[RMDB]
RNA sequence: GGGAACGACUCGAGUAGAGUCGAAAAAAGAUAUGGAGCGAGGAGACGCUUGGAUUUAUAGGCGAGAUGAGUAUGUCGGAAACGACAUACUGAGCCUAUUGUCAGCGUUGACUCGCUCCUAAGUCAAGUUAUCGUCGUUCUUCGGAACGACGAUAACAAAAGAAACAACAACAACAAC
Reactivity to DMS in 0.01 (KOAc 150mM, MgCl2 10mM, bicine 150mM(pH8.5), 24C), signal-to-noise 1, nucleotides 027 to 126: a120a060g000a090u000a300u010g000g010a010g000c000g000a030g010g030a300g010a020c000g000c000u010u020g040g000a000u000u010u000a000u000a010g000g000c010g020a200g010a150u000g020a090g000u000a020u000g030u010c000g000g000a070a090a200c010g020a000c000a010u000a010c000u000g010a130g000c000c010u000a000u000u000g010u000c000a030g020c020g000u000u010g040a300c000u000c000g010c000u000c000c000u000a000a030g020u000c050a180a120
Reactivity to 2A3 in 0.01 (KOAc 150mM, MgCl2 10mM, bicine 150mM(pH8.5), 24C), signal-to-noise 1, nucleotides 027 to 126: a000a000g040a000u150a050u180g010g000a000g010c000g020a010g010g000a050g040a030c030g000c150u110u180g130g010a000u100u300u040a010u040a000g040g000c040g010a110g000a300u260g020a100g070u000a020u020g040u000c000g020g020a030a180a060c000g000a010c000a000u040a000c010u010g000a040g010c000c000u010a010u010u040g040u060c030a000g000c000g000u030u010g020a000c000u020c000g000c000u000c020c020u010a000a000g000u000c010a040a080